This 177-nucleotide RNA was probed chemically with 2A3 and DMS. The DMS profile rests on 1,180 reads.
RNA sequence: GGGAACGACUCGAGUAGAGUCGAAAACGCCAGCAGCUUACGCUGUGCAACCAGCGCCUGAAUCGCGUCAUAGAAGCCUUUCAGUUGCGCGACAUCGCGUACAUCUGCCGGUUUGUCGCCAAGCUGAAUACUCCGUGGGUUUCGACCCACGGAGUAUAAAAGAAACAACAACAACAAC
Reactivity to 2A3 in 0.01 (KOAc 150mM, MgCl2 10mM, bicine 150mM(pH8.5), 24C), signal-to-noise 1, nucleotides 027 to 126: c040g020c000c000a000g000c000a000g000c020u050u030a030c030g000c000u010g000u020g060c030a030a080c000c070a020g020c000g050c000c000u000g010a040a000u020c030g010c000g080u040c040a060u070a300g180a130a030g050c000c000u000u040u040c010a030g000u100u110g070c030g000c000g020a010c000a020u030c020g000c010g040u000a000c020a200u030c040u020g020c030c030g060g050u050u080u170g070u080c090g040c070c060a030a020g060c070u060g030a130
Reactivity to DMS in 0.01 (KOAc 150mM, MgCl2 10mM, bicine 150mM(pH8.5), 24C), signal-to-noise 2, nucleotides 027 to 126: c210g010c020c010a040g010c000a030g030c170u000u000a060c020g020c000u000g020u010g000c090a130a090c130c210a100g000c020g000c030c000u020g000a010a010u000c150g000c000g010u010c060a180u000a180g000a080a090g000c000c000u000u000u010c010a010g000u000u000g000c060g010c020g010a170c020a020u000c300g020c020g000u000a020c180a060u000c060u050g020c000c020g000g040u000u010u000g010u000c040g010c030c010a070a130g010c100u000g010a130
Values cover nucleotides 27 to 126. For DMS the reverse transcriptase was MarathonRT.